Record summary:
An RNA of 207 nucleotides, treated with DMS and 2A3 and read out base by base. 2A3 adducts were read by reverse transcription with SuperScript II with manganese. For 2A3, 5,946 sequencing reads were counted. The RNA was probed in 150 mM KOAc, 10 mM MgCl2 and 150 mM bicine (pH 8.5) at 24 C. Source: RMDB library OK3TST, as collected in RNAgym. 2A3 is a SHAPE reagent: it acylates the 2'-hydroxyl of flexible nucleotides of all four kinds.

RNA sequence: GGGAACGACUCGAGUAGAGUCGAAAAUGAAUGAUUUGUUUAAUGUGUGAUUUACUAUCUGCUUUCUCUCCUUAGACUGGGAAUCAUGUAAAGAAAAGCUAUUCUCGAUCUUACAUUCAGGCAAUAGCAUUCUUUGAGCUCUGUAAUCAAGCUGGAAAUAUUAUGGACUGUUCGCAGUCCAUAAUAUAAAAGAAACAACAACAACAAC
Reactivity to DMS in 0.01 (KOAc 150mM, MgCl2 10mM, bicine 150mM(pH8.5), 24C), signal-to-noise 4, nucleotides 027 to 156: u010g010a070a060u010g010a110u000u000u000g030u000u000u010a050a050u000g020u000g020u000g010a070u000u000u000a060c040u010a070u000c060u000g030c040u000u010u000c040u000c020u000c020c040u010u000a090g020a080c030u000g020g020g010a100a070u000c050a080u000g020u010a030a050a100g000a070a040a080a120g020c030u000a050u020u000c010u010c030g010a040u010c050u000u010a070c080a090u000u000c070a060g020g010c070a020a040u000a060g020c010a210u000u000c030u000u000u000g010a120g010c020u010c030u000g010u000a070a120u000c070a030a080g010c000u000g010g010a080a100
Reactivity to 2A3 in 0.01 (KOAc 150mM, MgCl2 10mM, bicine 150mM(pH8.5), 24C), signal-to-noise 7, nucleotides 027 to 156: u120g030a030a030u050g040a060u060u040u080g050u050u090u070a080a060u050g020u010g010u020g070a060u030u090u120a060c030u040a060u090c050u080g030c010u020u060u030c040u030c010u030c020c020u070u070a090g030a160c080u080g020g010g040a040a050u100c070a080u150g090u200a070a060a030g020a010a070a010a010g000c010u020a030u030u060c090u030c070g060a090u000c030u070u140a050c020a050u050u070c070a030g030g010c010a020a010u010a070g020c010a030u010u010c000u050u040u040g010a010g010c010u020c040u090g100u130a070a090u110c070a040a020g060c020u030g060g010a070a250